[RMDB]
The record gives the reactivity of an RNA of 177 nucleotides to DMS and 2A3. The RNA was probed in 150 mM KOAc, 10 mM MgCl2 and 150 mM bicine (pH 8.5) at 24 C. For 2A3 the reverse transcriptase was SuperScript II with manganese.

RNA sequence: GGGAACGACUCGAGUAGAGUCGAAAAAGAUAUGGAGAUGGACGGAGCUUUGAUCGUAUGUGAUAGCUGUAUGGUCGGAAACGACCAUACCGAAACAUACGGGAGCUCCGGUACAUCUCCUAAGUCACGAUAACGGAAGGUUCGCCUUCCGUUAUCGAAAAGAAACAACAACAACAAC
Reactivity to DMS in 0.01 (KOAc 150mM, MgCl2 10mM, bicine 150mM(pH8.5), 24C), signal-to-noise 1, nucleotides 027 to 126: a070g010a010u000a000u020g000g000a020g010a000u000g000g000a070c100g010g020a020g020c000u000u000u030g010a010u030c020g000u000a000u000g000u010g010a200u020a140g020c060u000g010u000a000u000g020g010u000c000g020g010a000a010a030c000g000a020c000c000a010u000a000c020c070g000a090a190a030c000a000u000a000c010g000g000g000a010g020c000u000c000c000g020g010u010a040c000a000u000c000u000c000c000u000a000a030g000u000c010a300
Reactivity to 2A3 in 0.01 (KOAc 150mM, MgCl2 10mM, bicine 150mM(pH8.5), 24C), signal-to-noise 2, nucleotides 027 to 126: a000g010a010u020a000u060g000g000a000g010a000u010g000g000a010c010g030g020a010g010c040u300u270u010g010a010u020c010g020u000a020u020g040u030g190a300u290a180g110c030u020g000u000a000u000g010g000u010c010g000g000a000a000a000c000g000a010c010c000a000u000a000c000c000g040a070a040a020c000a010u010a000c040g000g000g010a000g000c000u020c010c000g000g020u000a000c000a000u000c000u000c000c000u000a000a000g010u010c010a010